[RMDB]
RNA sequence: GGGAACGACUCGAGUAGAGUCGAAAAAAAUGGCUUUUGCUUAAUUGCUAAAGUCCAUCAUCAGUAGACGUUUCUCAUCGUUCGCUGAAUGGUGUCAUAAAAAUGAGAUAGUUUAUUUUUCUGCUUCGGUUUAAUAAAUGAAUCCUUAGAAGAUAGCCAAUUACUACUCGUUCGCGAGUAGUAAUUGAAAAGAAACAACAACAACAAC
Reactivity to 2A3 in 0.01 (KOAc 150mM, MgCl2 10mM, bicine 150mM(pH8.5), 24C), signal-to-noise 7, nucleotides 027 to 156: a000a000a040u050g000g000c000u010u040u010u020g000c000u050u080a120a090u300u090g000c020u030a000a000a000g010u000c010c000a010u020c000a000u000c000a000g010u040a090g010a000c010g010u030u180u010c010u000c000a030u030c000g040u110u170c020g000c010u000g040a100a070u020g010g030u050g040u130c110a100u160a240a090a020a010a020u020g000a000g010a020u000a010g000u000u010u010a010u000u010u000u000u000c010u010g010c010u000u000c000g010g000u010u010u010a010a010u010a000a020a010u010g010a010a030u050c080c120u160u160a090g010a070a010g020a050u130a030g080c030
Reactivity to DMS in 0.01 (KOAc 150mM, MgCl2 10mM, bicine 150mM(pH8.5), 24C), signal-to-noise 2, nucleotides 027 to 156: a040a060a070u000g000g020c010u000u000u010u000g020c000u010u000a090a180u000u000g020c010u010a020a010a020g020u000c040c020a020u010c000a070u000c010a020g010u000a050g010a010c000g000u000u010u010c060u010c030a160u000c020g010u000u000c070g030c010u000g000a070a220u010g010g000u000g000u010c060a110u010a000a060a070a100a080u000g000a030g000a040u000a150g010u000u000u000a020u000u000u000u000u000c000u000g020c110u000u010c080g020g010u000u010u000a010a050u000a000a050a030u010g010a160a090u000c060c050u000u000a070g000a050a080g000a100u000a110g020c130
An RNA of 207 nucleotides, treated with 2A3 and DMS and read out base by base. For DMS the reverse transcriptase was MarathonRT. For DMS, 4,742 sequencing reads were counted. The RNA was probed in 150 mM KOAc, 10 mM MgCl2 and 150 mM bicine (pH 8.5) at 24 C.